[RMDB]
This 207-nucleotide RNA was probed chemically with 2A3.
The RNA was probed in 150 mM KOAc, 10 mM MgCl2 and 150 mM bicine (pH 8.5) at 24 C.
Reactivities are given for positions 27 through 156.

RNA sequence: GGGAACGACUCGAGUAGAGUCGAAAAACAUCAGGGCGAUCAAGCGCGUUCAACGCGUUCAUCAGCUGUUUCUGAUACCCAAUACACGAGCGACGCAAGGAUCAAGAGUCCGAGGACAGCAGCACCCUGUGUGAAUUCGUCGCCAUAGAUGCGGAGCAGAGCAGGUGUGGUUCGCCACACCUGCUCUAAAAGAAACAACAACAACAAC
Reactivity to 2A3 in 0.01 (KOAc 150mM, MgCl2 10mM, bicine 150mM(pH8.5), 24C), signal-to-noise 1, nucleotides 027 to 156: a000c090a000u120c010a030g030g000g000c000g020a020u050c080a050a170g030c000g000c030g070u250u270c260a280a110c000g050c010g120u110u000c000a030u010c030a010g000c000u010g110u220u150u040c060u040g010a030u080a090c000c000c000a000a030u070a080c130a000c060g060a070g030c020g000a000c000g000c040a060a060g030g000a020u050c030a140a050g080a090g120u000c050c010g010a030g000g100a010c020a000g030c020a000g020c000a060c010c080c040u070g000u040g030u000g020a000a050u140u020c000g000u000c010g050c000c000a020u130a040g230a090u070g100c070g000g030a000g060c070